[RMDB]
RNA sequence: GGGAACGACUCGAGUAGAGUCGAAAAUGACGCCUAUAACUGGAUGAAGCAUAUUAUACCAAAUGGUUUUGUAGGCAACCUUAAUAUGUAUAGUCUUGUCUUUAUCGUUACACGAUAAUCAAUUUAUAAAACAGCUCCCCCUUCGGGGGGAGCUGAAGUACUACUUAUUGUUCGCAAUAAGUAGUACAAAAGAAACAACAACAACAAC
Reactivity to 2A3 in 0.01 (KOAc 150mM, MgCl2 10mM, bicine 150mM(pH8.5), 24C), signal-to-noise 2, nucleotides 027 to 156: u040g070a030c040g020c000c000u000a000u000a010a040c030u030g000g020a000u010g010a010a000g000c000a010u010a000u020u020a040u020a070c110c050a080a060a190u140g010g000u020u010u030u000g000u010a000g010g000c000a000a000c000c000u010u010a010a010u000a000u000g000u000a000u000a010g010u000c000u000u040g050u020c120u020u110u010a000u010c000g030u010u060a080c110a010c050g000a000u020a000a040u060c030a010a080u000u300u260a210u230a130a080a020a010c000a000g030c000u000c000c000c010c020c020u000u010c100g030g000g040g030g000g000a000g000c000u000g000a000a000